[RMDB]
RNA sequence: GGGAACGACUCGAGUAGAGUCGAAAAGAUCAUCUACAUGAACUCCAAGAGUUCCAUUUCCUAGCCAAGGGUAGGAAUUGUUCUGCUCUAUGCAAUACGCCCAAUAAGUGUAAUUUUCAGCGCAUGAGCAUCCGUGAUGCUUCGGCAUCACGGAUGCAAAAGAAACAACAACAACAAC
Reactivity to 2A3 in 0.01 (KOAc 150mM, MgCl2 10mM, bicine 150mM(pH8.5), 24C), signal-to-noise 2, nucleotides 027 to 126: g020a070u090c040a020u110c020u010a070c060a130u240g010a010a060c000u050c090c020a130a060g040a000g040u050u280c010c000a020u000u060u040c000c000u050a050g080c050c040a230a160g110g000g000u080a060g140g110a100a010u120u080g060u070u010c000u000g020c000u000c000u040a010u040g000c030a020a080u110a110c050g150c040c000c020a080a000u090a130a090g220u100g040u070a020a200u000u070u000u060c120a000g030c070g020c010a040u070g050a000